RNA sequence: GGGAACGACUCGAGUAGAGUCGAAAAAAUUGAUGCAAGGUGUGGAGCGACCUUAAACAGUUCUGGUGGUGCUCUGAAUGGAGUCCUCUACUGAGAUUAUAAAAUAGAAGGUAAGCUAUUAUCUCUUAAAACGCAAUAGAGUUCGCUCUAUUGCGAACCAUCAUCGACAGUUCGCUGUCGAUGAUGGAAAAGAAACAACAACAACAAC
Reactivity to 2A3 in 0.01 (KOAc 150mM, MgCl2 10mM, bicine 150mM(pH8.5), 24C), signal-to-noise 2, nucleotides 027 to 156: a000a000u210u180g030a050u090g050c020a070a030g000g000u030g020u120g020g010a010g020c010g010a020c010c090u070u230a080a040a000c010a020g000u000u000c000u040g000g000u010g020g040u070g030c010u000c040u040g120a090a070u170g000g000a030g000u010c000c020u000c040u030a110c080u040g010a000g000a040u130u150a070u290a120a130a020a040u090a010g050a080a050g100g060u070a100a010g010c010u020a050u090u050a040u090c020u000c000u050u060a090a180a060a070c010g010c010a000a000u010a000g020a000g010u050u110c160g030c050u000c000u010a000u000u020g000c000g010a000a000
Structure probing data (2A3) for a 207-nucleotide construct. It was measured as part of the RMDB library M2RFPK. The reactions ran in a buffer of 150 mM KOAc, 10 mM MgCl2 and 150 mM bicine (pH 8.5), at 24 C. For 2A3 the reverse transcriptase was SuperScript II with manganese.